[RMDB]
RNA sequence: GGGAACGACUCGAGUAGAGUCGAAAAUGCACUGCUGCUGUUGAUUUAAGUAUGGAUAAGUUGCGCCGUGUGGAUUGGAAAUCAACCCUACGGUUGUUACUUAUGUUAUGCACAACUAUGGUAUUGUACGGGCAAUGGUUCGCCAUUGCCAAAAGAAACAACAACAACAAC
Reactivity to 2A3 in 0.01 (KOAc 150mM, MgCl2 10mM, bicine 150mM(pH8.5), 24C), signal-to-noise 8, nucleotides 027 to 129: u050g020c000a010c020u010g020c000u000g000c040u040g020u020u020g040a230u030u100u230a210a050g010u020a020u020g020g010a010u000a010a000g000u010u000g000c000g000c010c000g010u060g060u120g040g040a150u020u020g050g080a080a120a090u300c000a000a010c000c000c000u000a000c000g030g070u150u290g000u000u070a000c000u000u000a000u010g100u140u020a000u000g000c010a010c010a070a010c020u030a050u130g030g010u010a010u010u040g010u030a070c080g030
Reactivity to DMS in 0.01 (KOAc 150mM, MgCl2 10mM, bicine 150mM(pH8.5), 24C), signal-to-noise 4, nucleotides 027 to 129: u040g000c030a090c080u020g010c010u030g030c060u030g030u020u000g020a160u040u060u050a120a060g020u020a050u040g000g000a060u010a000a000g020u000u030g030c000g000c000c000g000u030g030u050g030g080a000u070u000g000g000a120a120a140u120c000a000a000c060c000c050u020a020c050g020g030u030u070g080u010u020a020c010u000u000a010u000g030u000u000a030u000g020c030a100c040a030a050c040u050a130u050g030g000u010a050u010u040g010u020a150c120g060
This 170-nucleotide RNA was probed chemically with 2A3 and DMS. Source: RMDB library 15KLIB, as collected in RNAgym. DMS adducts were read by reverse transcription with MarathonRT. Reactivities are given for positions 27 through 129. As a SHAPE reagent, 2A3 marks flexible, mostly unpaired nucleotides at the ribose 2'-OH. For DMS, 15,017 sequencing reads were counted.